[RMDB]
RNA sequence: GGGAACGACUCGAGUAGAGUCGAAAAGAUAUGGAUGUCGGUCGCGAGGAAUUCGGAAACGAAUUCUCCCCACCGAACUACGACAGUGACAUCCUAAGUCAAACUCUACGCGUUCGCGCGUAGAGAAGGUUAGUCCUUAGUUCGCUAAGGACUAACCAAAAGAAACAACAACAACAAC
Reactivity to 2A3 in 0.01 (KOAc 150mM, MgCl2 10mM, bicine 150mM(pH8.5), 24C), signal-to-noise 2, nucleotides 027 to 126: g030a000u070a020u130g010g000a010u030g020u000c020g020g020u030c040g080c120g250a100g090g000a020a030u050u010c020g000g070a020a080a100c070g030a040a000u070u040c110u220c050c050c000c020a100c000c090g130a180a060c110u150a050c070g040a010c020a090g100u090g280a000c030a000u010c010c010u010a070a010g030u030c000a020a030a120c020u030c000u000a000c000g000c010g000u000u070c300g000c000g000c000g090u000a000g000a000g020a000a000
Reactivity to DMS in 0.01 (KOAc 150mM, MgCl2 10mM, bicine 150mM(pH8.5), 24C), signal-to-noise 2, nucleotides 027 to 126: g000a020u000a290u000g000g020a030u000g010u000c000g000g020u000c030g010c110g000a070g000g020a040a010u000u000c010g000g020a040a080a110c000g000a020a010u000u000c010u000c020c010c040c090a300c110c140g010a070a060c070u010a270c000g000a020c020a030g030u020g020a010c020a000u000c030c000u010a070a140g010u000c010a160a080a140c000u000c000u010a000c010g000c000g010u000u000c180g010c000g030c000g000u000a000g000a000g000a020a050
Conditions: 150 mM KOAc, 10 mM MgCl2 and 150 mM bicine (pH 8.5), 24 C.
The record gives the reactivity of an RNA of 177 nucleotides to 2A3 and DMS.
It was measured as part of the RMDB library TTRDEL.